[RMDB]
RNA sequence: GGGAACGACUCGAGUAGAGUCGAAAAUGGGGAUAAUACAACAAUCUGCUGCAGCAUUUCCAAUCUUCAGGACUAUGAAAACCAUUUACCUAAGUGAUGGAAUCAAUCGCAAAAGCUGUUCAGUCACUGAGAGCUCCUAGUUCGCUAGGAGCUCUCAAAAAGAAACAACAACAACAAC
Reactivity to DMS in 0.01 (KOAc 150mM, MgCl2 10mM, bicine 150mM(pH8.5), 24C), signal-to-noise 1, nucleotides 027 to 126: u020g000g000g000g000a100u000a130a000u110a130c270a110a150c080a070a110u000c000u000g000c000u000g020c050a050g040c120a060u000u000u030c020c070a000a140u000c060u000u000c270a050g000g000a110c140u030a110u000g000a160a010a050a140c190c060a000u000u010u000a190c040c010u020a050a000g000u000g000a220u000g010g000a120a140u000c000a070a070u010c200g000c200a100a000a100a000g100c040u000g050u000u040c000a140g000u000c260a040c070
Reactivity to 2A3 in 0.01 (KOAc 150mM, MgCl2 10mM, bicine 150mM(pH8.5), 24C), signal-to-noise 2, nucleotides 027 to 126: u100g090g000g000g040a060u070a150a060u170a140c160a220a000c020a070a090u030c010u060g010c010u000g030c000a000g000c050a100u100u000u010c000c000a030a110u060c030u190u140c110a010g010g000a080c130u030a000u120g160a030a010a010a000c060c000a000u100u150u210a240c010c010u010a070a000g030u000g010a020u100g020g030a010a000u000c010a010a130u080c110g050c160a090a090a000a090g030c010u020g000u110u000c000a000g030u000c000a000c110
An RNA of 177 nucleotides, treated with DMS and 2A3 and read out base by base. Source: RMDB library OK1LIB, as collected in RNAgym. DMS adducts were read by reverse transcription with MarathonRT. For 2A3, 652 sequencing reads were counted. For 2A3 the reverse transcriptase was SuperScript II with manganese.